Background
Conditions: 150 mM KOAc, 10 mM MgCl2 and 150 mM bicine (pH 8.5), 24 C. An RNA of 177 nucleotides, treated with 2A3 and DMS and read out base by base. For 2A3 the reverse transcriptase was SuperScript II with manganese. For 2A3, 1,362 sequencing reads were counted.
RNA sequence: GGGAACGACUCGAGUAGAGUCGAAAAGAUAUGGAACAUACUACCCACCCUAAGAAGCUCUUUGAUCACUAUUCCUUCGGAAACGAAGGAAUAGUGGGAGAGCCUUAGGAGGUAUGUUCCUAAGUCACUUAUGAAAUCUCUUCGGAGAUUUCAUAAGAAAAGAAACAACAACAACAAC
Reactivity to 2A3 in 0.01 (KOAc 150mM, MgCl2 10mM, bicine 150mM(pH8.5), 24C), signal-to-noise 1, nucleotides 027 to 126: g120a090u210a280u300g000g010a040a010c000a010u000a000c000u300a300c000c080c010a030c030c000c000u010a070a090g080a300a060g100c040u070c030u240u300u230g170a250u230c020a000c020u010a000u020u030c000c000u040u000c000g000g000a170a060a050c000g010a010a040g000g000a010a010u000a000g030u000g000g060g000a010g010a000g000c020c010u000u010a000g040g000a030g030g000u000a010u000g030u020u000c000c010u000a060a010g150u130c040a040
Reactivity to DMS in 0.01 (KOAc 150mM, MgCl2 10mM, bicine 150mM(pH8.5), 24C), signal-to-noise 2, nucleotides 027 to 126: g010a110u010a110u010g040g000a030a010c000a010u000a020c000u000a170c040c060c040a300c130c000c000u010a010a000g000a220a200g020c000u000c010u000u020u010g010a110u010c000a010c000u000a000u000u000c000c000u010u000c020g010g000a040a080a200c030g020a010a000g000g010a030a000u000a010g010u000g010g010g000a010g000a030g050c020c000u000u020a010g000g010a100g010g000u000a010u010g000u010u000c000c000u020a020a120g010u010c100a100